[RMDB]
RNA sequence: GGGAACGACUCGAGUAGAGUCGAAAACAGGUGAGAGACUAUCCUUUAUACCAUUUGAUAAAAGCUCAGUCACAAAAGAAAAUGGGAGAAAUAGCAGACGCAAUUAAAACACUGCAUAUGGCAAUGAGUUUACCAGGAAUGAAAAGAAUUGGAGCUACUAUUUAGCGCGUUUCGACGCGCUAAAUAGAAAAGAAACAACAACAACAAC
Reactivity to 2A3 in 0.01 (KOAc 150mM, MgCl2 10mM, bicine 150mM(pH8.5), 24C), signal-to-noise 1, nucleotides 027 to 156: c000a000g140g000u040g010a070g000a000g000a070c020u010a080u040c060c020u120u090u090a100u140a110c040c040a070u130u180u160g010a100u230a110a010a050a010g300c070u010c050a000g010u000c050a050c020a020a100a010a020g080a070a150a000a040u000g020g010g020a050g010a020a000a110u120a010g000c000a000g050a300c080g010c060a000a050u130u130a080a060a030a000c060a000c000u020g020c010a140u020a050u130g080g000c000a010a070u020g010a020g000u020u140u020a020c000c010a000g090g000a020a020u040g070a040a050a000a130g060a110a000u170u020g050g040a020g000c000u040a010